[RMDB]
RNA sequence: GGGAACGACUCGAGUAGAGUCGAAAAAAAAAGAUAUGGAUCGAUUAAGAAGAGCAUCGAUCUAUACUGAGGCUCGGAAACGAGACCGCGGUAUAGGGAGCUCUUCAAUCGAUCCUAAGUCAAAAAAGUAUAAUAGCAGGUUCGCCUGCUAUUAUACAAAAGAAACAACAACAACAAC
Reactivity to DMS in 0.01 (KOAc 150mM, MgCl2 10mM, bicine 150mM(pH8.5), 24C), signal-to-noise 2, nucleotides 027 to 126: a060a040a060a070a080g000a030u010a300u000g000g000a010u000c000g000a010u000u000a080a090g010a000a010g020a010g030c010a190u010c140g000a040u010c000u000a000u000a000c000u000g000a040g000g010c000u000c000g010g000a100a060a120c000g000a010g000a110c000c000g000c010g000g010u000a000u000a010g010g010g010a020g020c000u000c000u000u000c000a010a020u000c000g010a010u010c000c010u000a000a060g010u020c020a000a070a100a050a060a060
Reactivity to 2A3 in 0.01 (KOAc 150mM, MgCl2 10mM, bicine 150mM(pH8.5), 24C), signal-to-noise 1, nucleotides 027 to 126: a010a060a000a060a000g070a020u070a020u100g000g000a000u000c010g020a000u050u160a300a170g000a000a000g000a010g000c040a130u300c060g050a000u060c030u000a020u000a000c000u000g000a020g020g020c010u000c020g010g060a030a060a060c010g030a000g190a160c000c000g050c030g000g030u020a000u010a010g030g000g000a010g000c000u020c070u040u010c000a000a000u000c000g000a000u010c000c000u000a010a000g000u030c030a010a000a030a050a050a280
Structure probing data (DMS and 2A3) for a 177-nucleotide construct. Source: RMDB library TTRDEL, as collected in RNAgym. The DMS profile rests on 2,203 reads. The reactions ran in a buffer of 150 mM KOAc, 10 mM MgCl2 and 150 mM bicine (pH 8.5), at 24 C. Values cover nucleotides 27 to 126.